[RMDB]
The record gives the reactivity of an RNA of 177 nucleotides to DMS and 2A3.
The RNA was probed in 150 mM KOAc, 10 mM MgCl2 and 150 mM bicine (pH 8.5) at 24 C.
Reactivities are given for positions 27 through 126.
RNA sequence: GGGAACGACUCGAGUAGAGUCGAAAAGAGGUUUGGUGGAUUUGAUGCAAUAGAGACAGCUGCUCUGAGGAAUCUCUAUACACAGAUUGUGUACACUCCAAUUCUUACCAUCGAUGGGUACAUCACGGCUGACAGAUCUAUUCGUAGAUCUGUCAGCAAAAGAAACAACAACAACAAC
Reactivity to DMS in 0.01 (KOAc 150mM, MgCl2 10mM, bicine 150mM(pH8.5), 24C), signal-to-noise 3, nucleotides 027 to 126: g000a070g030g070u010u040u020g000g000u040g000g000a130u000u000u040g010a060u010g000c060a080a090u010a020g010a090g000a010c100a040g040c060u010g030c040u010c020u060g010a130g000g000a120a100u000c010u020c020u000a160u000a020c050a020c020a060g080a090u010u040g010u000g000u000a060c140a160c070u010c040c020a010a030u060u010c010u050u000a110c050c070a040u000c120g000a050u010g000g000g000u010a040c070a070u040c080a080c140g030
Reactivity to 2A3 in 0.01 (KOAc 150mM, MgCl2 10mM, bicine 150mM(pH8.5), 24C), signal-to-noise 5, nucleotides 027 to 126: g040a030g060g020u060u060u060g030g000u050g030g060a070u030u100u090g080a040u060g010c070a070a070u040a070g030a010g010a020c020a040g080c010u040g010c050u040c060u110g070a070g040g090a080a040u010c000u000c020u050a060u030a020c020a000c010a010g200a200u210u120g020u020g020u080a050c050a020c020u020c010c000a030a040u130u050c030u050u110a080c010c010a050u140c030g020a080u090g010g070g060u080a070c010a020u040c010a040c090g070